The record gives the reactivity of an RNA of 170 nucleotides to 2A3 and DMS.
2A3 adducts were read by reverse transcription with SuperScript II with manganese.
Conditions: 150 mM KOAc, 10 mM MgCl2 and 150 mM bicine (pH 8.5), 24 C.
As a SHAPE reagent, 2A3 marks flexible, mostly unpaired nucleotides at the ribose 2'-OH.
For DMS the reverse transcriptase was MarathonRT.
RNA sequence: GGGAACGACUCGAGUAGAGUCGAAAAGUCCGAGUGAAGGGAGACUCCGGAACUCCAGUCAUUUGAGGGACGAAUCCGCCCCCGGGCGCUCCCCUCGGACUUCCUCCAGGAGGGUUCACAUCCCCAAAUGCAAAACGGUUCGCCGUUUUGAAAAGAAACAACAACAACAAC
Reactivity to 2A3 in 0.01 (KOAc 150mM, MgCl2 10mM, bicine 150mM(pH8.5), 24C), signal-to-noise 9, nucleotides 027 to 129: g000u000c000c000g000a000g010u170g170a160a130g010g010g010a010g030a060c010u010c040c010g000g030a040a030c040u040c060c060a070g110u120c090a200u090u100u240g120a170g000g030g010a040c040g040a060a090u060c060c040g030c020c010c000c000c010g010g000g000c160g000c010u000c000c000c000c000u000c000g000g000a000c000u010u010c000c010u020c000c000a030g050g040a040g030g040g020u090u110c080a060c010a140u120c010c000c000c000a020a040a020u120g010
Reactivity to DMS in 0.01 (KOAc 150mM, MgCl2 10mM, bicine 150mM(pH8.5), 24C), signal-to-noise 9, nucleotides 027 to 129: g000u020c000c000g020a030g000u050g040a180a100g000g000g000a000g000a160c010u020c040c040g010g010a130a120c000u030c050c080a130g050u030c010a100u000u040u060g040a100g010g010g010a090c060g010a110a090u020c130c070g040c040c030c030c020c050g000g030g000c190g000c070u040c010c010c020c010u030c010g010g020a010c000u010u000c010c020u010c060c030a130g060g000a130g000g020g020u040u060c090a110c090a190u060c040c020c010c020a060a110a070u010g010